[RMDB]
RNA sequence: GGGAACGACUCGAGUAGAGUCGAAAACAUUCUGAGCGCUCGCUGGGCAGUCAGUGCAGGGCGGGACAACAGUCACGUGUUGCUUCCCAAGACAUACAGUCACGGGCCCCUUAACAACAAGGAUGCACUUACCUUCUUAAUUCGUUAAGAAGGUAAGAAAAGAAACAACAACAACAAC
Reactivity to 2A3 in 0.01 (KOAc 150mM, MgCl2 10mM, bicine 150mM(pH8.5), 24C), signal-to-noise 5, nucleotides 027 to 126: c010a040u080u070c020u060g040a040g040c140g010c030u020c040g060c030u070g000g050g000c010a020g090u220c020a030g080u030g060c000a020g020g030g000c020g010g000g010a020c020a130a020c010a070g070u100c050a020c140g030u080g120u040u040g020c020u050u030c000c000c000a010a030g040a000c010a010u300a050c060a040g040u050c020a020c080g050g070g000c020c000c010c010u140u150a100a060c070a040a020c020a010a070g100g020a090u120g030c030a010
Reactivity to DMS in 0.01 (KOAc 150mM, MgCl2 10mM, bicine 150mM(pH8.5), 24C), signal-to-noise 8, nucleotides 027 to 126: c080a090u000u000c040u000g000a110g020c120g020c020u000c060g020c050u000g010g010g010c040a070g000u010c120a070g030u000g020c040a070g010g000g010c050g020g000g010a050c040a070a080c080a060g000u010c150a080c240g010u000g010u000u000g000c150u000u000c000c000c010a110a190g000a060c050a080u010a110c170a090g000u000c040a120c210g000g000g000c040c040c020c040u000u000a060a070c130a050a060c110a060a070g000g000a090u010g020c130a200
Structure probing data (2A3 and DMS) for a 177-nucleotide construct. It was measured as part of the RMDB library OK2TRN. 2A3 adducts were read by reverse transcription with SuperScript II with manganese. For DMS the reverse transcriptase was MarathonRT. The reactions ran in a buffer of 150 mM KOAc, 10 mM MgCl2 and 150 mM bicine (pH 8.5), at 24 C. DMS (dimethyl sulfate) methylates the pairing face of unpaired adenines and cytosines. Reactivities are given for positions 27 through 126.